Source information
Chemical mapping of a 177-nucleotide RNA with DMS and 2A3. The reactions ran in a buffer of 150 mM KOAc, 10 mM MgCl2 and 150 mM bicine (pH 8.5), at 24 C. Values cover nucleotides 27 to 126. For DMS the reverse transcriptase was MarathonRT.
RNA sequence: GGGAACGACUCGAGUAGAGUCGAAAAAUGCAACUUCAAGAGUGAAGGGGCAUAUGCUUCUUUUUCAAUUGAGUAUUGAGUAUUAGCAAGACGUAGUAAGUAUAUGAGACAAGUCCUACAAUGGUUGACGCUUACAAAUGUUCGCAUUUGUAAGCGUAAAAGAAACAACAACAACAAC
Reactivity to DMS in 0.01 (KOAc 150mM, MgCl2 10mM, bicine 150mM(pH8.5), 24C), signal-to-noise 3, nucleotides 027 to 126: a020u010g020c000a050a000c030u000u000c010a110a140g020a190g000u020g020a010a010g000g020g000g000c000a020u000a090u000g010c030u000u000c000u000u000u000u010u000c050a070a090u040u030g000a140g010u010a020u010u000g000a100g010u020a000u000u030a050g040c050a060a120g010a140c130g000u020a030g000u030a030a060g000u010a040u040a030u020g010a170g000a060c040a020a060g000u010c020c020u000a050c130a090a120u010g000g000u000u030g000
Reactivity to 2A3 in 0.01 (KOAc 150mM, MgCl2 10mM, bicine 150mM(pH8.5), 24C), signal-to-noise 5, nucleotides 027 to 126: a000u010g000c010a020a000c020u010u010c040a060a080g210a120g300u090g000a070a000g010g000g010g010c010a010u020a040u250g030c060u020u060c000u040u130u050u030u050c040a060a200u030u110g100a070g050u100a050u020u040g010a030g020u030a040u120u020a050g030c090a120a020g050a010c120g020u050a040g030u030a140a130g000u020a110u000a070u270g040a010g000a050c050a100a010g050u010c010c000u040a070c070a080a100u130g100g000u070u060g030